About this RNA:
Structure probing data (DMS) for a 177-nucleotide construct. The DMS profile rests on 411 reads.
[RMDB]
RNA sequence: GGGAACGACUCGAGUAGAGUCGAAAACAAACACCAAGUCACAAAGAAGCUAAAUGCCCUGUGAGCAUAACCAUCCAUUUCAAACAGUUGAUAUAAAUGGAUUGUAGCAAAUUGUGAUCUCAGGCAAAUCAACGGGCAGAUUCGUCUGCCCGUUGAUAAAAGAAACAACAACAACAAC
Reactivity to DMS in 0.01 (KOAc 150mM, MgCl2 10mM, bicine 150mM(pH8.5), 24C), signal-to-noise 1, nucleotides 027 to 126: c020a170a020a260c090a140c000c000a150a060g000u000c000a000c000a000a090a080g000a300a120g000c000u000a030a290a120u000g020c000c020c150u020g030u000g000a120g030c050a000u000a210a090c080c000a080u000c000c000a000u000u010u010c060a020a050a140c110a300g020u000u000g000a110u000a120u000a050a090a020u000g000g000a000u000u000g000u000a030g020c050a090a260a230u020u000g000u000g000a050u000c030u000c170a150g020g000c120a030a030